Background
Structure probing data (2A3) for a 177-nucleotide construct.
[RMDB]
RNA sequence: GGGAACGACUCGAGUAGAGUCGAAAAGACCACCUCUACGAGAGGUGUUAGGCAUUAGCCAGCCACAACGGCUUGCACGCGAGUCUAGACCCCUUCGUGCAAACAUAUUCAAGCAGCCGUUGCAGCACGAAGGUCCUGCGUUCGCGCAGGACCUUCGAAAAGAAACAACAACAACAAC
Reactivity to 2A3 in 0.01 (KOAc 150mM, MgCl2 10mM, bicine 150mM(pH8.5), 24C), signal-to-noise 1, nucleotides 027 to 126: g020a030c000c000a000c020c020u000c010u080a210c210g290a030g000a030g240g000u000g020u000u020a010g000g020c000a020u020u020a030g000c050c060a000g030c090c010a080c060a100a000c000g020g000c000u000u030g000c120a000c000g010c080g050a000g000u000c000u020a030g120a280c000c000c000c000u000u010c000g030u100g020c000a020a080a000c020a030u210a110u210u300c290a140a040g070c060a030g000c050c020g040u040u090g000c060a010g000c040a020